An RNA of 177 nucleotides, treated with DMS and 2A3 and read out base by base. For DMS the reverse transcriptase was MarathonRT. The data come from the RNA Mapping Database (RMDB), library M2PK90. DMS (dimethyl sulfate) methylates the pairing face of unpaired adenines and cytosines.

RNA sequence: GGGAACGACUCGAGUAGAGUCGAAAACAAUUGAGCGUCGCACACACACAGACUAAGUCUGACACUGACAGAGCCUAAACCGCUCUGUCAGUGUGCGAGUUAUCGUUCUUAAUGUGAGCAGAGGAAACUAAGGAGUUGGAUUCGUCCAACUCCUUAGAAAAGAAACAACAACAACAAC
Reactivity to DMS in 0.01 (KOAc 150mM, MgCl2 10mM, bicine 150mM(pH8.5), 24C), signal-to-noise 6, nucleotides 027 to 126: c040a120a110u000u010g020a070g010c040g000u000c030g020c010a080c050a070c120a090c160a160c100a010g000a020c030u010a080a120g010u000c010u010g000a050c070a040c060u000g000a010c000a000g000a010g000c000c010u000a050a080a110c300c300g000c000u000c000u000g000u010c000a000g000u000g010u000g010c030g000a030g010u000u010a060u020c060g010u010u000c010u000u010a080a080u000g000u010g000a080g010c030a070g020a090g010g000a090a070a160
Reactivity to 2A3 in 0.01 (KOAc 150mM, MgCl2 10mM, bicine 150mM(pH8.5), 24C), signal-to-noise 3, nucleotides 027 to 126: c010a020a130u070u180g020a030g030c050g080u040c010g000c010a000c000a000c000a000c010a000c020a060g020a030c050u200a240a070g040u000c010u010g060a040c000a000c040u000g010a000c010a000g000a000g000c000c000u040a050a040a020c010c010g010c000u000c010u000g000u000c000a000g000u000g010u000g000c000g000a000g000u060u080a120u150c040g040u020u010c010u050u110a150a080u140g040u050g080a040g020c060a030g030a040g090g090a080a050a030